[RMDB]
RNA sequence: GGGAACGACUCGAGUAGAGUCGAAAAGCAAAAGAUUAUCCAGGUGUAGCGGUGAAAUUCGUAGAGAUCUGGUGGAUAAUGAACCGGUGGCGAAGGCGAAAGUUAACCGCUGAAAAGAAGAAUUGAAACUUAGCCCAAGUUUCGACUUGGGCUAAGUAAAAGAAACAACAACAACAAC
Reactivity to DMS in 0.01 (KOAc 150mM, MgCl2 10mM, bicine 150mM(pH8.5), 24C), signal-to-noise 1, nucleotides 027 to 126: g020c120a050a050a010a070g010a040u010u000a040u030c010c040a090g000g070u000g060u000a060g050c020g020g000u000g000a090a180a120u000u000c020g000u000a190g030a170g000a080u010c010u000g000g030u000g000g000a200u010a140a090u010g010a100a040c010c020g000g000u000g000g000c280g020a090a090g010g000c030g010a030a040a040g010u000u030a120a080c030c020g000c000u000g000a100a010a050a150g010a040a050g000a050a090u000u010g000a080a090
Chemical mapping of a 177-nucleotide RNA with DMS. For DMS the reverse transcriptase was MarathonRT. The data come from the RNA Mapping Database (RMDB), library M2PK90.